Conditions: 150 mM KOAc, 10 mM MgCl2 and 150 mM bicine (pH 8.5), 24 C. Chemical mapping of a 207-nucleotide RNA with DMS and 2A3. Reactivities are rounded to 0.1 and cut off at 0 and 3. It was measured as part of the RMDB library RNAMAK. Reactivities are given for positions 27 through 156.
RNA sequence: GGGAACGACUCGAGUAGAGUCGAAAAGGGGUCGUGUAACCGCAGCUAUACAUCGAUCGAGCCUGGAGUCCUGAAGCCUCCACGGGACGAUGAAAGGCUCGGGAGUAUUGAAAAAAUUUACACGACGGAGGCACCCAAAUGCGCUUUCGAGCGCAAAUAACACACCAAUAUUCGUAUUGGUGUGUUAAAAAGAAACAACAACAACAAC
Reactivity to DMS in 0.01 (KOAc 150mM, MgCl2 10mM, bicine 150mM(pH8.5), 24C), signal-to-noise 2, nucleotides 027 to 156: g000g000g040g020u000c010g060u010g020u000a030a090c210c100g000c230a130g000c100u000a100u000a060c020a200u000c120g020a170u000c000g010a030g020c000c010u000g010g010a140g030u000c000c020u000g020a060a130g010c050c000u010c020c000a280c040g000g000g000a020c000g010a120u000g020a130a190a060g000g000c000u000c010g000g020g010a130g030u000a030u000u000g000a000a050a110a040a170a150u000u000u000a020c010a010c030g010a080c040g010g020a040g020g020c000a020c010c020c020a030a070a130u000g000c000g020c000u000u000u000c230g010a030g000c010g010c000a000a010a100
Reactivity to 2A3 in 0.01 (KOAc 150mM, MgCl2 10mM, bicine 150mM(pH8.5), 24C), signal-to-noise 4, nucleotides 027 to 156: g050g000g000g010u010c010g000u010g000u000a040a070c100c120g090c170a050g050c030u040a020u010a040c040a200u250c070g080a080u060c010g000a010g000c000c000u020g010g010a020g000u010c000c000u000g020a030a000g010c000c000u020c000c010a060c060g000g000g010a000c000g080a170u030g010a010a020a000g000g000c000u000c010g000g020g000a030g000u010a030u020u080g070a230a040a010a000a000a010u020u040u020a000c000a000c000g020a010c060g000g000a000g000g000c010a010c000c010c010a050a140a070u090g000c010g010c000u070u100u150c290g100a020g000c000g000c000a000a030a000